[RMDB]
RNA sequence: GGGAACGACUCGAGUAGAGUCGAAAAAUUGCCACAGCCUCAGUGGCUUAAAUAACAGAAACUUAUUUUUUCAAAGUUCUGGAGGCUACCAGUCCAAGAUCCAGGUGUUGACAGAGUCGUUUUCUUCUGUCCGAGCGUUCUUGCCUUGGCUUGGAAACAUCUCAUCUGAUUUCGAUCAGAUGAGAUGAAAAGAAACAACAACAACAAC
Reactivity to DMS in 0.01 (KOAc 150mM, MgCl2 10mM, bicine 150mM(pH8.5), 24C), signal-to-noise 1, nucleotides 027 to 156: a180u000u020g010c000c010a010c020a050g000c000c000u000c030a300g030u010g000g010c030u000u000a030a010a160u020a110a300c030a090g010a070a050a070c030u010u010a070u000u010u000u020u000u040c080a110a060a080g000u000u010c010u000g030g020a060g010g020c020u010a070c060c040a210g000u020c010c020a020a040g010a080u000c000c020a020g000g030u010g020u010u000g010a030c020a020g000a050g010u010c120g030u010u010u000u010c020u000u000c010u010g030u000c030c040g000a080g020c000g020u010u000c000u000u000g000c020c090u000u010g000g000c010u000u000g050g010a190a170a170
Reactivity to 2A3 in 0.01 (KOAc 150mM, MgCl2 10mM, bicine 150mM(pH8.5), 24C), signal-to-noise 2, nucleotides 027 to 156: a000u060u110g000c010c000a010c020a000g020c000c020u010c000a010g010u020g040g020c030u000u080a070a090a060u110a050a040c080a050g110a120a090a030c080u030u120a180u120u180u080u050u100u150c150a210a100a000g000u020u020c000u020g060g000a010g030g070c050u060a090c090c030a020g080u000c000c000a040a000g020a090u020c000c010a020g090g000u060g020u210u200g070a020c010a010g010a010g070u090c160g090u120u120u080u140c010u080u060c010u020g020u000c000c040g050a000g050c020g030u040u010c040u060u120g040c010c010u040u070g020g000c010u000u010g000g000a010a010a010